[RMDB]
RNA sequence: GGGAACGACUCGAGUAGAGUCGAAAAUGGGAAGAAAAUGCUUGAUAGAGCAAUGUAUGCUGAAGAUGUGGCUCUUGGAGGAUCUGUAAGUGUUGAUCCGAUUGACAUUGGGAAUGAAUUAAACAGUAUCAACGAGUCGAUCAACAAGUCUCAUGAACAUGUCAAUCGCUUUCGAGCGAUUGACAUGAAAAGAAACAACAACAACAAC
Reactivity to DMS in 0.01 (KOAc 150mM, MgCl2 10mM, bicine 150mM(pH8.5), 24C), signal-to-noise 1, nucleotides 027 to 156: u030g010g020g000a100a120g000a120a090a050a070u020g020c020u020u030g020a160u010a170g010a070g030c030a020a030u000g000u010a060u000g030c030u000g000a190a110g000a130u020g040u010g020g000c000u000c010u000u020g040g000a060g030g000a040u000c050u030g030u000a070a120g030u000g030u000u000g000a030u000c000c060g010a050u000u000g040a060c050a050u000u000g020g010g010a210a210u000g040a160a180u000u000a120a060a160c020a010g040u000a050u000c010a060a040c020g000a110g040u000c050g020a090u000c010a030a050c000a050a270g020u000c030u000c040a080u000g010a120a260
Reactivity to 2A3 in 0.01 (KOAc 150mM, MgCl2 10mM, bicine 150mM(pH8.5), 24C), signal-to-noise 2, nucleotides 027 to 156: u080g000g050g010a010a040g010a090a110a030a020u060g020c050u110u050g000a090u080a210g040a000g000c040a040a030u050g060u060a030u080g020c020u030g020a070a020g020a060u040g010u120g050g010c040u010c050u050u040g070g000a090g020g020a040u010c000u060g140u100a060a050g030u020g050u120u070g040a000u000c060c060g060a020u000u060g010a020c000a010u000u080g020g000g060a030a090u050g020a010a070u130u080a070a060a000c000a000g030u100a020u080c000a020a050c000g010a000g080u030c010g000a070u030c010a000a010c010a040a010g040u010c020u030c010a050u070g030a010a020